This 177-nucleotide RNA was probed chemically with 2A3 and DMS. The data come from the RNA Mapping Database (RMDB), library RFM100. DMS adducts were read by reverse transcription with MarathonRT. For 2A3 the reverse transcriptase was SuperScript II with manganese.
[RMDB]
RNA sequence: GGGAACGACUCGAGUAGAGUCGAAAAGUAGACAGGCCGCUUUAGCUCUUAUUUAAGAUCGGUAAAAAACGGAAUAAAACGCCCUAAAUAGCAGCAAAAAAGGCCAUAUGGCGCAGUUUUAGGGCAAUUGUAAACUCGAGUUCGCUCGAGUUUACAAAAAAGAAACAACAACAACAAC
Reactivity to 2A3 in 0.01 (KOAc 150mM, MgCl2 10mM, bicine 150mM(pH8.5), 24C), signal-to-noise 1, nucleotides 027 to 126: g020u050a000g000a080c080a010g100g030c000c000g010c000u150u120u030a000g000c040u040c040u190u090a210u080u130u090a020a060g020a100u010c030g020g060u100a000a000a000a040a000a270c040g110g000a040a020u140a060a140a050a000c120g050c000c000c000u010a020a020a070u110a020g050c060a010g000c020a010a020a020a020a020a000g180g000c030c000a000u040a180u300g020g000c000g000c040a030g020u010u010u010u010a000g000g040g010c000a000a000
Reactivity to DMS in 0.01 (KOAc 150mM, MgCl2 10mM, bicine 150mM(pH8.5), 24C), signal-to-noise 2, nucleotides 027 to 126: g050u020a090g030a090c200a060g020g030c010c040g000c060u000u000u000a210g030c060u020c020u010u060a110u010u070u070a050a010g000a070u030c000g000g000u000a000a070a070a040a070a140c000g000g040a170a090u000a100a020a160a160c170g000c000c010c000u000a010a000a010u020a140g000c020a100g020c100a000a020a150a040a190a160g000g000c030c060a140u040a040u050g090g000c000g000c030a100g000u010u000u000u000a000g000g000g000c000a010a000